[RMDB]
RNA sequence: GGGAACGACUCGAGUAGAGUCGAAAAUAAACCGCUGAACCGCUUUCAUGCUUGGGAUUGUGAACUGAAACUGUUCACAUGAACCUGCAUUGAUUACGUCCCUGCCCCUGUACACACCGCCCGUCGCGACUGUAAAGAUCUUCGGAUCUUUACAGUCAAAAGAAACAACAACAACAAC
Reactivity to DMS in 0.01 (KOAc 150mM, MgCl2 10mM, bicine 150mM(pH8.5), 24C), signal-to-noise 3, nucleotides 027 to 126: u010a040a100a150c050c010g030c080u000g010a100a080c080c040g020c070u000u000u010c040a000u010g000c000u000u000g000g000g010a090u000u000g000u000g000a020a000c000u010g000a140a120a130c300u010g020u000u000c000a010c010a000u000g010a300a190c010c020u000g000c010a000u010u020g010a050u010u000a060c100g000u010c020c020c030u000g000c030c000c020c020u000g000u000a050c090a090c080a080c090c050g020c030c010c010g010u010c080g020c170
Reactivity to 2A3 in 0.01 (KOAc 150mM, MgCl2 10mM, bicine 150mM(pH8.5), 24C), signal-to-noise 2, nucleotides 027 to 126: u050a020a060a000c020c010g000c060u020g030a050a030c040c020g050c060u050u050u050c020a000u020g000c010u040u060g020g000g010a030u020u030g000u000g000a010a000c010u020g050a170a110a090c170u150g010u000u000c000a010c010a010u000g020a010a080c010c000u010g000c000a020u030u180g020a020u040u090a040c040g040u050c010c000c000u030g030c000c000c000c000u020g040u050a010c030a000c010a010c030c010g010c000c020c010g020u050c040g020c050